[RMDB]
RNA sequence: GGGAACGACUCGAGUAGAGUCGAAAAACAUGUGGCACCUCUGAGUGAUUUACUUGCUCACCAUUUCUAUAUUUAGUGCCAUUUAAUGCUUGUUGGCCAAGUUUUCAGAGAGAAAAAGAAGGAGGAAUUUGGUGGUAGAGUGGGGAAGGGGUCGGUACAUACCGUCAGUAUUCGUACUGACGGUAUGAAAAGAAACAACAACAACAAC
Reactivity to 2A3 in 0.01 (KOAc 150mM, MgCl2 10mM, bicine 150mM(pH8.5), 24C), signal-to-noise 3, nucleotides 027 to 156: a010c080a040u190g010u030g020g000c000a000c020c010u010c090u030g010a000g000u090g060a100u070u200u260a130c080u090u130g000c020u020c010a030c050c010a090u040u170u070c090u180a200u070a110u210u210u230a000g000u000g000c000c020a000u010u060u070a140a070u070g060c040u040u020g010u010u040g030g040c050c030a090a040g000u000u000u030u080c120a070g010a040g040a020g010a070a070a000a020a030g080a030a040g100g050a020g010g000a050a060u110u080u140g010g000u030g010g030u070a050g070a060g050u170g010g000g030g050a090a070g010g000g020g010u040c030g000g020u050a000
Reactivity to DMS in 0.01 (KOAc 150mM, MgCl2 10mM, bicine 150mM(pH8.5), 24C), signal-to-noise 1, nucleotides 027 to 156: a050c080a050u010g050u000g000g000c040a050c010c100u020c030u040g020a020g060u000g030a070u020u000u020a100c220u030u000g080c020u000c030a080c060c040a170u010u000u000c140u050a170u020a140u000u000u020a010g020u000g030c000c000a040u000u000u000a110a080u000g070c080u000u000g040u000u000g020g000c150c110a110a140g050u000u000u040u000c040a140g020a170g020a120g030a100a050a040a060a000g040a110a110g080g030a160g020g000a030a080u000u000u000g010g000u000g040g010u000a070g020a120g010u000g000g010g010g020a070a080g000g000g010g010u000c030g020g020u000a120

The data come from the RNA Mapping Database (RMDB), library OK3TST. Chemical mapping of a 207-nucleotide RNA with 2A3 and DMS. 2A3 is a SHAPE reagent: it acylates the 2'-hydroxyl of flexible nucleotides of all four kinds. DMS adducts were read by reverse transcription with MarathonRT. The DMS profile rests on 1,574 reads.